[RMDB]
RNA sequence: GGGAACGACUCGAGUAGAGUCGAAAAGCCAAACACUGCCUUGCGUCUGUGGUGGAUCUUGGGAAGGAGAAUUUCUUGCCCUCCCUCCAGGAGUAGUAGAGCUCUGCUUUGCAUCGGCUGCAGUAUCGAUCUGUUAGCCCUUCGGGGCUAACAGAUCAAAAGAAACAACAACAACAAC
Reactivity to 2A3 in 0.01 (KOAc 150mM, MgCl2 10mM, bicine 150mM(pH8.5), 24C), signal-to-noise 1, nucleotides 027 to 126: g060c000c000a030a040a080c120a000c030u020g090c010c010u080u120g050c010g080u080c010u070g060u040g000g000u000g040g070a020u030c050u010u150g000g020g030a040a030g050g040a110g110a140a140u110u050u090c020u030u120g100c000c000c030u030c020c010c000u020c000c010a010g070g020a010g010u080a010g040u050a000g010a020g040c010u050c030u170g000c000u030u020u110g050c060a020u080c040g090g000c040u030g040c010a010g030u040a040u180c070